[RMDB]
RNA sequence: GGGAACGACUCGAGUAGAGUCGAAAAAUGUAGAACACUUAACGUGGACGAGCAAGAGGAUUACUAAUCACGGGCAGAAGAAGAUGUCACGGUACACGGCUCAAUUCAAGGGCAUGUUGCCAGACACGUAUCUGAACGGAACUCAUGUUUGGACCUCUAGUUACAAUCUGUUCGCAGAUUGUAACUAAAAAGAAACAACAACAACAAC
Reactivity to DMS in 0.01 (KOAc 150mM, MgCl2 10mM, bicine 150mM(pH8.5), 24C), signal-to-noise 5, nucleotides 027 to 156: a070u000g020u000a110g020a110a160c020a030c030u000u010a090a100c120g020u000g020g010a240c030g010a110g030c030a090a070g010a080g000g020a180u010u010a160c080u000a070a070u010c060a080c020g010g020g040c020a070g000a260a180g010a090a100g000a080u000g000u000c020a070c100g070g000u010a050c040a020c040g000g040c010u000c000a070a150u000u000c260a140a280g000g020g030c020a080u010g010u000u010g030c020c020a300g040a020c010a020c020g010u000a080u000c030u020g000a040a110c050g010g000a070a050c050u000c020a060u000g000u000u000u000g000g000a150c040c010u010c030
Reactivity to 2A3 in 0.01 (KOAc 150mM, MgCl2 10mM, bicine 150mM(pH8.5), 24C), signal-to-noise 8, nucleotides 027 to 156: a000u150g030u110a030g070a180a040c050a030c100u120u160a140a010c110g040u040g000g030a030c020g000a020g020c020a050a030g010a000g070g020a070u170u110a140c070u160a070a050u090c060a070c090g000g020g000c020a010g000a070a000g030a070a010g060a130u020g010u000c020a010c160g010g000u020a010c030a000c110g070g000c010u000c010a030a200u250u190c100a100a170g000g000g000c030a050u120g040u070u040g050c000c010a000g000a010c000a000c020g030u050a050u070c020u010g010a020a010c020g030g040a040a020c010u020c050a020u060g030u020u010u040g040g040a100c000c000u000c040